[RMDB]
RNA sequence: GGGAACGACUCGAGUAGAGUCGAAAAUGAUAUAAUCUGCAUCCGACAACGAUCACCAACUUCCACCUUGAUCGAUUGGUCGCAUAAUCCAUUAAAUUUGGAAGUAGUCGCUCAUGCUUAACCAUACAGUCAUCCUAGUCUUCGGACUAGGAUGACUAAAAGAAACAACAACAACAAC
Reactivity to 2A3 in 0.01 (KOAc 150mM, MgCl2 10mM, bicine 150mM(pH8.5), 24C), signal-to-noise 1, nucleotides 027 to 126: u070g040a000u150a000u030a130a190u140c000u030g000c000a000u050c080c000g050a050c000a280a090c140g010a030u050c030a000c020c030a000a020c000u000u000c000c000a000c000c020u000u230g070a060u000c000g000a010u000u010g000g000u050c000g020c020a080u170a090a000u000c000c070a000u060u060a040a110a120u100u010u010g000g000a010a000g000u000a010g000u120c000g000c000u060c000a000u140g000c000u030u060a000a100c000c020a000u000a220c060
The record gives the reactivity of an RNA of 177 nucleotides to 2A3. It was measured as part of the RMDB library OK1LIB. 2A3 adducts were read by reverse transcription with SuperScript II with manganese. The reactions ran in a buffer of 150 mM KOAc, 10 mM MgCl2 and 150 mM bicine (pH 8.5), at 24 C.